The record gives the reactivity of an RNA of 177 nucleotides to DMS. The reactions ran in a buffer of 150 mM KOAc, 10 mM MgCl2 and 150 mM bicine (pH 8.5), at 24 C. Source: RMDB library TTRINS, as collected in RNAgym.
[RMDB]
RNA sequence: GGGAACGACUCGAGUAGAGUCGAAAAGAUAUGGAUAUUCGUCUCCAUGGAGUCGCAGGCCGAGGUACAUCGGAAACGAUGUAUACAGCCUGAACUACGACGAAGUGGAGACGAAUAUCCUAAGUCACUGUUAAAAGAGCUUCGGCUCUUUUAACAGAAAAGAAACAACAACAACAAC
Reactivity to DMS in 0.01 (KOAc 150mM, MgCl2 10mM, bicine 150mM(pH8.5), 24C), signal-to-noise 1, nucleotides 027 to 126: g000a030u000a300u000g010g000a030u000a030u000u000c030g000u000c010u010c000c000a020u000g000g020a300g030u000c000g010c020a010g020g040c000c000g050a300g000g000u010a000c010a000u000c000g000g000a160a140a110c000g000a000u020g000u010a020u000a000c000a020g000c030c000u020g000a040a130c150u000a300c030g000a040c030g020a300a300g000u000g010g000a030g000a000c000g000a000a000u000a000u000c000c000u000a000a120g010u010c070a190